[RMDB]
RNA sequence: GGGAACGACUCGAGUAGAGUCGAAAAGCUUUAUGCAACUAACUGUUUACAUAUCUGUCCCCUGCUACUAGAUUGUGAGCUCCUUGAGGGAAAGGAACAUGAUUUAUUUGUCCUUUUCCCCCAGCACCUAGAGUAGUGCUUGGUGCAUGAUAGUAGAGGUCAUCAGUAUAUUCGUAUACUGAUGACCAAAAGAAACAACAACAACAAC
Reactivity to DMS in 0.01 (KOAc 150mM, MgCl2 10mM, bicine 150mM(pH8.5), 24C), signal-to-noise 2, nucleotides 027 to 156: g000c070u010u010u000a050u000g000c020a040a060c040u000a140a190c140u010g010u000u000u000a050c050a070u000a060u000c050u000g020u000c000c010c010c020u000g000c010u000a030c040u000a060g000a170u010u000g030u010g020a080g000c050u000c020c020u000u000g010a030g000g010g000a020a030a010g000g010a000a010c010a020u000g030a160u000u010u000a200u010u000u010g020u000c010c000u000u000u000u000c010c000c010c000c020a050g000c020a010c010c020u000a050g030a080g030u000a040g020u010g010c040u000u000g010g030u000g010c040a060u020g000a180u000a110g040u000a100g020a300
Reactivity to 2A3 in 0.01 (KOAc 150mM, MgCl2 10mM, bicine 150mM(pH8.5), 24C), signal-to-noise 7, nucleotides 027 to 156: g020c030u120u170u100a090u200g020c050a040a060c050u110a090a030c050u100g050u120u100u110a070c060a100u120a060u060c050u050g110u100c010c010c010c000u010g010c000u020a140c000u000a050g030a130u070u100g020u020g060a050g040c030u050c020c020u100u090g050a160g000g010g030a000a000a010g010g020a070a040c010a020u120g080a190u180u170u190a130u110u180u090g020u020c000c000u020u040u070u120c000c000c000c000c000a000g000c000a000c000c020u050a020g010a010g140u160a040g020u040g040c010u040u070g010g010u040g010c020a010u140g030a020u010a030g030u040a020g040a050